[RMDB]
Overview:
This 177-nucleotide RNA was probed chemically with 2A3 and DMS.
RNA sequence: GGGAACGACUCGAGUAGAGUCGAAAAGUUGAGACUGCUAAAAGAACAGGCGCUCGUGUAGCAGGUCCUAUUCCGUUGCCUACAAAGAGGGAAGUGUACACCGUGCUGCGUUCUCCUCACGUAGAUAAGUCGUGAGAAUAUUCGUAUUCUCACGACUAAAAGAAACAACAACAACAAC
Reactivity to 2A3 in 0.01 (KOAc 150mM, MgCl2 10mM, bicine 150mM(pH8.5), 24C), signal-to-noise 1, nucleotides 027 to 126: g070u060u080g060a090g030a060c020u030g040c020u100a020a030a030a070g120a160a040c020a040g080g070c110g000c050u060c000g090u050g020u000a050g020c060a000g030g020u000c020c020u010a100u070u000c010c000g100u090u110g140c000c080u080a040c060a050a070a030g060a020g000g000g000a010a040g050u000g000u080a020c090a040c090c010g070u060g040c050u050g000c000g080u000u000c020u050c000c000u040c010a010c040g050u040a030g050a230u060a080
Reactivity to DMS in 0.01 (KOAc 150mM, MgCl2 10mM, bicine 150mM(pH8.5), 24C), signal-to-noise 3, nucleotides 027 to 126: g030u000u000g000a090g010a130c020u000g000c040u010a060a090a100a180g010a050a060c050a200g000g010c090g000c010u000c070g020u010g010u000a050g010c010a020g000g000u020c020c030u000a150u000u010c030c020g000u020u010g020c090c030u000a060c030a060a200a070g000a040g010g000g010a070a040g020u000g010u000a080c060a070c170c160g010u010g020c060u000g000c050g000u000u000c000u020c010c000u020c040a050c300g010u000a040g000a070u000a080
The RNA was probed in 150 mM KOAc, 10 mM MgCl2 and 150 mM bicine (pH 8.5) at 24 C.